Structure probing data (DMS and 2A3) for a 177-nucleotide construct.
For DMS, 7,577 sequencing reads were counted.
For DMS the reverse transcriptase was MarathonRT.
The 2A3 profile rests on 2,796 reads.
RNA sequence: GGGAACGACUCGAGUAGAGUCGAAAAGCCCAGCAGCUGAAGACGUUGUUUGAACAAGCCAAGCAGGCGAGCUCUUGCAGGGAAGCUGCUGUGACCCAGGCGAGAAUGCAGGUUGAUGCAGAGAGGAUCAUAUAGUGCGGUUCGCCGCACUAUAUGAAAAAGAAACAACAACAACAAC
Reactivity to DMS in 0.01 (KOAc 150mM, MgCl2 10mM, bicine 150mM(pH8.5), 24C), signal-to-noise 6, nucleotides 027 to 126: g020c090c030c000a040g000c030a020g020c020u000g010a130a140g010a120c120g010u010u000g010u010u010u000g010a050a060c100a090a270g010c030c010a090a150g040c200a130g010g010c010g010a230g010c030u000c010u000u010g010c040a050g000g000g000a110a050g010c010u000g010c020u000g000u010g000a110c030c010c020a140g010g010c050g010a090g010a130a070u000g020c030a050g000g010u010u000g010a100u000g000c030a020g000a080g010a090g000g000a170
Reactivity to 2A3 in 0.01 (KOAc 150mM, MgCl2 10mM, bicine 150mM(pH8.5), 24C), signal-to-noise 3, nucleotides 027 to 126: g020c000c010c010a000g020c010a010g000c000u070g050a100a010g070a070c070g180u070u000g020u060u030u060g030a050a020c050a070a010g040c020c000a140a040g080c110a100g110g010c010g030a010g000c010u020c010u080u090g000c020a020g060g000g070a030a010g010c000u010g020c010u010g050u030g040a030c010c000c000a030g100g000c040g000a090g090a190a020u150g000c020a000g120g000u100u060g060a060u040g000c050a010g010a020g030a040g140g060a040